Chemical mapping of a 177-nucleotide RNA with DMS and 2A3. Reactivities are given for positions 27 through 126. It was measured as part of the RMDB library TTRDES. DMS adducts were read by reverse transcription with MarathonRT. The 2A3 profile rests on 6,556 reads.

[RMDB]
RNA sequence: GGGAACGACUCGAGUAGAGUCGAAAAAAAGAUAUGGAUGCAAGAACUACAGCGGGGAAAGCGAAGAACAGUAUUCGGAAACGAAUACUGGGAGCUUUCGCCGUGCUGCUUGCAUCCUAAGUCAAAAUCAUAAAGUGAUCUUCGGAUCACUUUAUGAAAAAGAAACAACAACAACAAC
Reactivity to DMS in 0.01 (KOAc 150mM, MgCl2 10mM, bicine 150mM(pH8.5), 24C), signal-to-noise 3, nucleotides 027 to 126: a070a120a100g000a010u000a130u010g010g010a010u010g010c000a020a000g000a090a040c130u040a300c020a040g020c000g000g010g000g000a000a010a000g000c000g000a080a110g000a090a200c010a010g010u000a000u010u000c000g000g000a040a010a060c010g000a020a010u000a000c000u000g010g000g000a040g020c000u000u000u000c000g000c000c000g000u010g000c050u000g000c000u010u000g000c000a000u000c000c000u000a000a070g000u000c020a100a090a090a120
Reactivity to 2A3 in 0.01 (KOAc 150mM, MgCl2 10mM, bicine 150mM(pH8.5), 24C), signal-to-noise 2, nucleotides 027 to 126: a000a000a010g030a010u020a020u060g000g000a000u010g010c010a030a000g020a140a050c120u270a070c300a040g050c020g000g000g040g010a010a000a010g040c030g270a300a020g000a040a000c010a000g000u000a000u000u010c000g010g000a000a010a010c000g000a000a000u000a010c000u000g000g000g000a010g010c000u020u000u010c070g050c050c000g090u090g040c010u000g000c000u010u000g000c000a000u000c000c000u000a010a000g010u010c020a010a020a030a300